[RMDB]
RNA sequence: GGGAACGACUCGAGUAGAGUCGAAAAUUCUACUAUUCUCGCAGGAAAAUGGCGGCGGACAAUGUUUUAUUAUCGAGCCCCAACAAUCGCCUGUUCUUCGUUCGAGAGUAUUGUCCGAAUAAAGCGACGGACGUGAUAAUUUCGAUUAUCACGUCCGAAAAGAAACAACAACAACAAC
Reactivity to DMS in 0.01 (KOAc 150mM, MgCl2 10mM, bicine 150mM(pH8.5), 24C), signal-to-noise 1, nucleotides 027 to 126: u010u000c000u000a120c090u010a060u000u020c040u000c040g040c110a110g060g020a100a130a130a080u000g000g000c100g000g000c110g090g000a050c020a090a130u040g000u000u010u010u010a020u020u010a040u000c070g010a020g000c020c020c090c020a100a090c220a030a130u010c060g000c000c000u010g000u000u000c090u010u000c060g000u000u000c020g020a020g000a040g040u000a000u000u030g010u030c010c000g010a100a060u010a010a110a050g020c090g000a180
Reactivity to 2A3 in 0.01 (KOAc 150mM, MgCl2 10mM, bicine 150mM(pH8.5), 24C), signal-to-noise 2, nucleotides 027 to 126: u010u000c000u080a110c010u000a060u080u000c020u040c040g000c010a060g080g100a070a170a050a010u130g040g030c070g000g010c000g040g000a020c040a070a110u110g050u010u180u160u180a180u110u110a090u050c030g010a000g020c000c000c020c000a010a010c000a060a110u140c050g000c000c000u010g010u090u060c040u060u040c000g060u000u040c010g020a030g040a000g030u000a010u080u020g040u030c020c020g000a070a000u190a150a060a000g050c110g030a040